[RMDB]
Source: RMDB library OK3TST, as collected in RNAgym.
The record gives the reactivity of an RNA of 207 nucleotides to 2A3.

RNA sequence: GGGAACGACUCGAGUAGAGUCGAAAAGGCACAAAAAAGAAGAGAAGCAACAAUGGACCAGGACUAUUGAUGAUUAUAACACUCAUGACGGCUGUUUCAAUGGUUUCCUCUUUAAAGCUUUCCAACUUCCAGGGGAAAGUCAUGAUGACCAUCAACGCAGAACGCAUGCGUUCGCGCAUGCGUUCUGAAAAGAAACAACAACAACAAC
Reactivity to 2A3 in 0.01 (KOAc 150mM, MgCl2 10mM, bicine 150mM(pH8.5), 24C), signal-to-noise 1, nucleotides 027 to 156: g050g000c060a030c060a010a120a000a000a000a000g070a030a010g020a000g040a020a010g040c020a010a070c010a090a140u070g060g000a010c010c030a010g060g030a060c050u050a060u030u090g070a080u040g010a010u050u150a130u240a150a080c030a030c090u030c050a080u040g060a030c020g020g010c030u050g050u010u150u060c040a070a020u030g010g040u050u100u040c000c030u000c090u000u050u160a050a100a030g000c000u130u140u000c020c030a080a110c070u120u060c070c020a040g020g010g000g000a010a010a010g030u020c000a060u080g030a010u010g020a000c010c020a010u060c040a000a090c080g080